An RNA of 177 nucleotides, treated with 2A3 and DMS and read out base by base.
It was measured as part of the RMDB library TTRDEL.
The 2A3 profile rests on 45,958 reads.
Conditions: 150 mM KOAc, 10 mM MgCl2 and 150 mM bicine (pH 8.5), 24 C.
RNA sequence: GGGAACGACUCGAGUAGAGUCGAAAAGAUAUGGAAUCCCAAUGGACAUGCUGAUCGGAAACGAUACCAGCAACAGCCAUGGGAUUCCUAAGUCAAACCGGAAUAUACGUUCGCGUAUAUUCCGGAACUUAACUACUAUGUUCGCAUAGUAGUUAAGAAAAGAAACAACAACAACAAC
Reactivity to 2A3 in 0.01 (KOAc 150mM, MgCl2 10mM, bicine 150mM(pH8.5), 24C), signal-to-noise 7, nucleotides 027 to 126: g010a010u030a020u090g000g010a000a000u010c000c030c000a040a250u050g000g020a110c060a110u030g000c000u000g010a010u000c000g010g020a020a020a010c000g010a010u060a280c140c020a010g040c010a020a070c140a090g130c000c000a000u000g000g020g000a000u000u000c000c000u000a020a000g020u000c050a070a040a140c000c000g000g000a010a000u000a000u000a010c020g010u020u110c300g000c010g150u000a000u000a000u000u000c000c000g000g000a000a000
Reactivity to DMS in 0.01 (KOAc 150mM, MgCl2 10mM, bicine 150mM(pH8.5), 24C), signal-to-noise 9, nucleotides 027 to 126: g010a020u000a230u010g000g000a020a010u000c000c000c000a040a060u000g010g010a200c090a160u000g000c000u000g000a050u000c000g010g000a060a050a120c010g010a010u000a100c300c020a000g000c000a010a090c300a100g000c000c000a020u000g000g000g000a010u000u000c000c000u000a000a050g000u000c020a070a120a160c000c000g000g000a010a010u000a000u000a000c000g020u000u020c210g020c000g020u000a000u000a000u000u000c000c010g000g000a000a010